[RMDB]
RNA sequence: GGGAACGACUCGAGUAGAGUCGAAAAGGCUGCAACGUAGUCAUAAGGGACGUACCUCCUCUUGUUAUGUCUUAUGACUAGUCGUAAUAUGAUACAAGAGGAGGAUCAUGUUACGACAUCUGUAGCGCUACAUCAUUCUAUUCGUAGAGUGAUGUAGAAAAGAAACAACAACAACAAC
Reactivity to DMS in 0.01 (KOAc 150mM, MgCl2 10mM, bicine 150mM(pH8.5), 24C), signal-to-noise 9, nucleotides 027 to 126: g010g010c000u000g010c010a030a140c300g010u010a020g010u000c000a040u000a020a040g010g010g020a080c120g020u000a110c010c000u000c000c000u000c060u000u000g010u010u000a090u010g010u010c010u000u000a010u000g000a010c010u000a090g010u000c000g010u000a010a010u000a010u000g000a040u000a070c110a100a040g000a020g000g000a010g010g000a010u000c020a010u000g010u000u000a010c010g010a020c010a130u000c150u000g010u000a010g010c010g010
Reactivity to 2A3 in 0.01 (KOAc 150mM, MgCl2 10mM, bicine 150mM(pH8.5), 24C), signal-to-noise 9, nucleotides 027 to 126: g060g000c010u010g000c010a050a040c080g180u170a080g000u010c000a010u020a040a030g090g030g100a050c060g080u100a070c000c000u010c020c000u030c020u070u140g210u210u160a130u190g070u010c000u010u020a010u010g000a000c010u020a040g010u000c000g000u000a000a000u020a010u030g040a010u010a050c060a120a030g000a000g010g000a000g000g000a000u000c000a000u010g000u010u010a010c010g000a000c010a030u070c060u050g010u010a000g000c000g000
An RNA of 177 nucleotides, treated with DMS and 2A3 and read out base by base. The data come from the RNA Mapping Database (RMDB), library OK2TRN. The DMS profile rests on 170,893 reads.